Annotation: This 177-nucleotide RNA was probed chemically with 2A3. 2A3 adducts were read by reverse transcription with SuperScript II with manganese. Values are in units of 0.01, from 0 to 300, in steps of 10.
RNA sequence: GGGAACGACUCGAGUAGAGUCGAAAACUAUCGUCAUUACGCUGCCGUGCAGUCUGAUGGGACCCACUACAACUCUAUGGGCUACGCGAUUCACGGAGAGAAACUGGCUUCCAUGCUCAUGGCUGGCCCACGUGCGCUAGUUCGCUAGCGCACGUGGAAAAGAAACAACAACAACAAC
Reactivity to 2A3 in 0.01 (KOAc 150mM, MgCl2 10mM, bicine 150mM(pH8.5), 24C), signal-to-noise 2, nucleotides 027 to 126: c030u020a080u160c040g070u070c080a050u010u230a060c130g000c000u020g000c000c070g110u070g020c040a000g030u040c020u080g090a100u050g000g090g010a080c000c000c000a000c000u120a030c010a220a020c010u040c000u070a090u140g010g030g040c050u090a030c080g050c090g060a030u010u110c000a020c110g040g000a060g000a000g020a150a100a010c040u020g030g000c000u050u000c000c050a050u120g030c000u020c000a020u140g000g000c060u040g060g040c050